RNA sequence: GGGAACGACUCGAGUAGAGUCGAAAACAAUGGAUGGAUACAAUACGAUAAACAUUGUUAUCUAGAUACCAACAUUAAAAUGUCCACAGAUAAUGCAGUUUAUCAGUGUCGUAAAUUACGAGCUAGAUUGCCUAGACCUGAUACUAGACAUCUGAGAUGAUCAUGCGUUUUUCGAAACGCAUGAUCAAAAAGAAACAACAACAACAAC
Reactivity to DMS in 0.01 (KOAc 150mM, MgCl2 10mM, bicine 150mM(pH8.5), 24C), signal-to-noise 1, nucleotides 027 to 156: c070a090a070u040g010g010a140u000g040g000a220u000a040c040a040a050u000a030c040g010a070u000a010a030a090c010a110u000u020g010u010u010a010u000c010u020a120g010a140u010a170c090c110a040a050c020a130u000u000a050a050a040a110u000g000u010c020c070a060c100a080g010a040u000a010a010u000g030c110a190g010u000u000u000a010u000c020a140g080u020g030u000c000g010u010a060a070a110u000u000a100c060g020a070g020c040u010a000g020a160u000u010g050c030c000u010a100g000a180c060c050u010g040a140u000a100c010u010a000g040a060c030a040u000c020u000g010a090g010a300
Reactivity to 2A3 in 0.01 (KOAc 150mM, MgCl2 10mM, bicine 150mM(pH8.5), 24C), signal-to-noise 3, nucleotides 027 to 156: c060a010a080u050g050g050a110u040g020g030a010u080a110c030a010a040u040a120c020g100a090u160a080a080a010c060a080u040u060g010u090u030a010u020c030u020a000g040a040u130a130c000c020a030a060c030a060u020u210a070a050a090a070u080g000u030c010c030a050c000a030g010a040u050a060a050u220g020c040a020g020u100u110u110a030u030c010a000g040u050g050u300c030g020u050a000a000a270u160u180a120c070g030a000g030c020u040a010g040a300u070u160g070c060c020u000a030g030a000c000c000u000g030a010u000a020c000u050a020g030a020c000a020u000c030u070g070a020g020a090